[RMDB]
RNA sequence: GGGAACGACUCGAGUAGAGUCGAAAAGAUAUGGAUAACGGUGACCCACCCUUGGACCACGCUCGGAAACGAGCGUGCUAGGGUGCACCCUCUUAUCCUAAGUCAAAACUCCCACUUCGGUGGGAGAGAGAAAAGUAAACUUCGGUUUACUUUUCUCAAAAGAAACAACAACAACAAC
Reactivity to 2A3 in 0.01 (KOAc 150mM, MgCl2 10mM, bicine 150mM(pH8.5), 24C), signal-to-noise 5, nucleotides 027 to 126: g030a020u080a050u210g010g010a010u020a040a080c300g000g000u030g110a170c100c090c030a020c010c010c020u040u260g070g100a080c160c010a000c010g000c000u010c010g050g000a070a140a110c010g000a000g000c000g010u000g010c000u010a010g000g000g000u010g000c000a000c000c010c000u010c000u000u010a000u000c000c000u020a190a010g060u030c020a000a010a100a260c010u000c010c010c010a010c000u060u110c300g110g000u010g000g020g000a000g000a000
Reactivity to DMS in 0.01 (KOAc 150mM, MgCl2 10mM, bicine 150mM(pH8.5), 24C), signal-to-noise 8, nucleotides 027 to 126: g010a040u010a300u010g000g000a000u000a030a010c080g000g010u000g000a240c300c300c090a020c010c000c000u000u010g030g010a140c300c010a000c000g010c000u000c000g010g000a090a100a180c010g010a010g010c000g040u000g000c030u000a020g010g010g010u010g010c010a010c000c000c000u000c010u000u000a010u000c000c000u000a050a150g010u000c020a130a090a140a240c000u000c000c000c000a000c000u000u020c180g030g010u000g000g000g000a010g010a050
Structure probing data (2A3 and DMS) for a 177-nucleotide construct. The DMS profile rests on 9,394 reads. Conditions: 150 mM KOAc, 10 mM MgCl2 and 150 mM bicine (pH 8.5), 24 C. The 2A3 profile rests on 13,399 reads.